Overview: This 177-nucleotide RNA was probed chemically with DMS. The data come from the RNA Mapping Database (RMDB), library OK2TRN. For DMS the reverse transcriptase was MarathonRT. The reactions ran in a buffer of 150 mM KOAc, 10 mM MgCl2 and 150 mM bicine (pH 8.5), at 24 C.

[RMDB]
RNA sequence: GGGAACGACUCGAGUAGAGUCGAAAAUAGGGGAUGGGACAUUGCACUGGCCCCCAUGUCAGGGUUUGCAAAUCAAAUCAGGUACCCUGCAUUAAUCUCAGACAUGGUGACCUGGUUCGCUAAUAACAACCCUUCGACUUUUCGAAGUCGAAGGGUUAAAAGAAACAACAACAACAAC
Reactivity to DMS in 0.01 (KOAc 150mM, MgCl2 10mM, bicine 150mM(pH8.5), 24C), signal-to-noise 1, nucleotides 027 to 126: u030a100g010g000g020g000a100u000g020g010g020a140c070a090u010u010g040c050a060c150u010g020g000c050c000c010c000c090a050u000g010u010c050a080g000g020g000u000u010u010g010c050a040a080a100u000c150a020a080a010u000c120a070g000g010u010a040c030c030c020u020g000c010a060u040u000a060a090u000c060u000c120a060g000a090c070a020u000g000g010u000g000a100c010c010u000g040g020u010u000c070g000c100u020a020a090u020a100a070c180